[RMDB]
RNA sequence: GGGAACGACUCGAGUAGAGUCGAAAAACGUCUUGCUGGAGGCUACUCGCUCCAGCUUACAAGCAAGUAGCCUUGUAAAGAUCGUAGAUGUUCGAUCUGAUAGUGAACAUCUACACUAUCGAAGAUGACACUGACCAUCUUCAAGACGUGUCAGUGACGUUCUAUGCAUGUUCGCAUGCAUAGAACGAAAAGAAACAACAACAACAAC
Reactivity to DMS in 0.01 (KOAc 150mM, MgCl2 10mM, bicine 150mM(pH8.5), 24C), signal-to-noise 2, nucleotides 027 to 156: a060c080g010u010c040u000u000g020c040u020g000g040a030g020g030c020u000a090c050u000c050g000c000u000c000c040a130g030c050u010u000a020c000a010a000g010c030a050a110g030u000a060g010c040c000u000u010g010u020a050a080a100g000a050u020c170g020u000a030g000a070u000g020u000u010c020g030a140u010c100u000g000a190u010a170g040u000g000a050a090c020a090u000c020u000a030c010a090c050u000a010u010c010g000a070a090g010a080u000g020a140c010a070c000u010g010a070c060c000a020u000c000u000u000c120a070a100g000a000c000g000u000g030u000c010a040g000u000g000a170
Reactivity to 2A3 in 0.01 (KOAc 150mM, MgCl2 10mM, bicine 150mM(pH8.5), 24C), signal-to-noise 5, nucleotides 027 to 156: a000c020g010u000c010u030u040g010c020u020g050g000a000g000g030c010u050a040c010u020c060g030c020u020c030c010a020g010c010u010u020a010c000a000a010g000c000a060a060g070u060a010g090c030c000u040u040g050u090a120a100a020g030a050u160c130g010u010a000g010a010u010g010u020u000c030g060a170u060c140u250g140a170u150a140g170u110g030a000a000c000a000u000c000u010a000c010a010c020u090a050u100c040g040a050a010g020a010u010g000a000c000a000c010u010g020a000c000c010a010u010c020u100u080c050a020a000g040a010c040g020u030g000u040c000a010g010u000g020a030